[RMDB]
RNA sequence: GGGAACGACUCGAGUAGAGUCGAAAAAAGAAGGGCGCCUUCCAAGUUACACUCCGCGAAUAUAUAUGUAUGUACGUACGUACGUAACUUGUAUUCGUGUACGCCAGCGCUAUAUGCGUACAUAAUAAUUACGGCAGUACUUCGGUACUGCCGUAAUAAAAGAAACAACAACAACAAC
Reactivity to 2A3 in 0.01 (KOAc 150mM, MgCl2 10mM, bicine 150mM(pH8.5), 24C), signal-to-noise 3, nucleotides 027 to 126: a020a040g150a030a020g070g010g000c040g020c010c000u000u030c040c010a090a030g000u060u100a060c070a040c010u080c040c010g000c000g010a030a000u020a000u030a010u000a020u280g060u100a000u040g030u000a000c070g050u040a030c140g000u010a000c020g000u060a100a140c040u000u030g020u040a040u040u050c020g000u010g030u040a010c020g010c020c030a030g050c060g000c030u060a040u040a050u300g060c020g000u010a030c010a010u250a080a070u150a130
Reactivity to DMS in 0.01 (KOAc 150mM, MgCl2 10mM, bicine 150mM(pH8.5), 24C), signal-to-noise 2, nucleotides 027 to 126: a070a050g010a120a050g010g040g060c000g010c120c020u000u000c070c060a060a100g000u030u020a040c100a090c060u050c050c010g030c040g010a010a030u000a020u000a070u010a050u040g000u000a000u000g000u000a000c050g050u020a070c190g060u000a000c010g010u010a020a030c050u000u000g040u000a030u000u010c010g000u010g000u000a030c070g000c020c090a100g000c000g020c060u000a140u010a070u010g030c000g010u000a010c040a060u050a060a060u010a130